[RMDB]
RNA sequence: GGGAACGACUCGAGUAGAGUCGAAAACACACUCCAGCUACCAUGCAUUCCCUCGAUGCAAUAAAAAGCCAUUGGCAUUUUUGUGUGAAUGGAGAUGAUUAUAUUGGAGGAAUGUCACCAUUGUUAGGUGUUAGCGGACAUUCGUGUCCGCUAACACAAAAGAAACAACAACAACAAC
Reactivity to DMS in 0.01 (KOAc 150mM, MgCl2 10mM, bicine 150mM(pH8.5), 24C), signal-to-noise 1, nucleotides 027 to 126: c100a050c060a190c060u010c000c040a110g010c080u000a130c150c090a140u000g000c020a030u000u000c010c000c010u000c060g010a090u000g000c070a120a030u000a050a010a120a140a070g000c000c000a050u000u000g000g010c010a040u010u000u010u000u030g010u000g000u000g000a080a010u000g000g010a050g000a110u030g010a100u000u000a050u000a070u000u000g140g000a060g000g000a040a080u000g010u000c020a050c080c040a090u000u010g000u000u020a090g000
Reactivity to 2A3 in 0.01 (KOAc 150mM, MgCl2 10mM, bicine 150mM(pH8.5), 24C), signal-to-noise 1, nucleotides 027 to 126: c060a000c000a030c000u030c010c000a020g000c030u060a050c040c030a070u130g010c010a000u010u030c000c030c000u000c000g080a000u010g020c010a040a030u120a130a110a050a000a000g090c010c000a050u000u030g130g040c020a010u030u060u060u300u300g060u010g000u040g130a000a000u000g020g000a110g010a020u080g030a000u030u150a060u000a010u060u000g030g000a020g000g040a030a020u060g010u040c020a030c070c030a120u030u120g060u080u230a060g160
An RNA of 177 nucleotides, treated with DMS and 2A3 and read out base by base. It was measured as part of the RMDB library OK2TST. The reactions ran in a buffer of 150 mM KOAc, 10 mM MgCl2 and 150 mM bicine (pH 8.5), at 24 C. For 2A3 the reverse transcriptase was SuperScript II with manganese. The DMS profile rests on 913 reads.